[RMDB]
RNA sequence: GGGAACGACUCGAGUAGAGUCGAAAAACUAAUAGAUGUUGAUGAGUGACCAACAGAAAGAACAUCAUAUUCACUUUCACCACGCCACGGGAAUGGGUGUAACCCGUCUUUUUGUCGGAUGGUUGAACCCGGUCUGAAUGUUCGCAUUCAGACCGGGAAAAGAAACAACAACAACAAC
Reactivity to 2A3 in 0.01 (KOAc 150mM, MgCl2 10mM, bicine 150mM(pH8.5), 24C), signal-to-noise 1, nucleotides 027 to 126: a000c000u030a000a190u120a160g120a060u030g010u100u000g110a240u030g000a070g070u220g000a250c000c000a130a000c070a000g300a000a040a000g030a000a100c010a010u000c000a000u000a100u300u000c000a000c000u000u000u300c000a000c000c030a000c040g030c130c000a000c010g020g000g080a010a010u140g000g000g000u090g070u000a060a060c000c000c000g000u000c040u000u160u040u090u180g030u040c010g000g010a010u010g090g060u000u130g150a090a180
Record summary
An RNA of 177 nucleotides, treated with 2A3 and read out base by base. Source: RMDB library OK1LIB, as collected in RNAgym. Conditions: 150 mM KOAc, 10 mM MgCl2 and 150 mM bicine (pH 8.5), 24 C.